[RMDB]
RNA sequence: GGGAACGACUCGAGUAGAGUCGAAAACUGUCCUGUGUGGAAGUACGUGAGUACUUCACGCUCUACGGGAGUAGAGCCACACAGAUCGUGGAGCGAUGUCUUGGAACUACUCCCGUAGUUCACGUAUGACUCACGUCAUACCAAGACGACAGCCACGCGAUGGUAGUUAGUUCGCUAACUACCAUCGAAAAGAAACAACAACAACAAC
Reactivity to DMS in 0.01 (KOAc 150mM, MgCl2 10mM, bicine 150mM(pH8.5), 24C), signal-to-noise 2, nucleotides 027 to 156: c010u000g010u000c010c000u000g030u000g010u000g000g020a120a130g020u010a010c010g030u020g000a270g030u000a060c090u010u000c070a090c120g020c050u000c010u000a020c000g060g020g000a220g030u000a010g000a140g000c000c000a020c010a050c010a040g000a050u000c020g010u000g010g010a300g020c010g010a020u000g020u000c000u010u010g010g000a060a160c000u000a030c030u020c100c060c110g050u000a000g020u000u000c090a140c130g030u000a080u000g020a060c000u030c140a050c120g030u010c040a120u000a070c030c010a040a050g000a040c030g030a070c040a050g010c020c040a100c130g000
Reactivity to 2A3 in 0.01 (KOAc 150mM, MgCl2 10mM, bicine 150mM(pH8.5), 24C), signal-to-noise 6, nucleotides 027 to 156: c000u000g010u010c000c000u010g010u010g000u000g010g030a040a030g020u140a010c010g010u020g010a010g010u090a290c010u070u100c050a030c060g060c030u030c000u000a010c000g010g010g010a010g000u000a000g000a010g010c000c000a000c000a000c000a010g010a010u020c010g030u140g130g080a120g130c020g010a020u010g010u010c010u000u010g010g010a050a060c000u000a000c000u000c000c020c000g000u000a000g000u040u090c100a090c090g090u140a050u110g020a010c000u000c030a010c020g000u000c000a000u030a070c010c000a000a000g000a000c000g000a000c000a000g000c000c000a050c040g050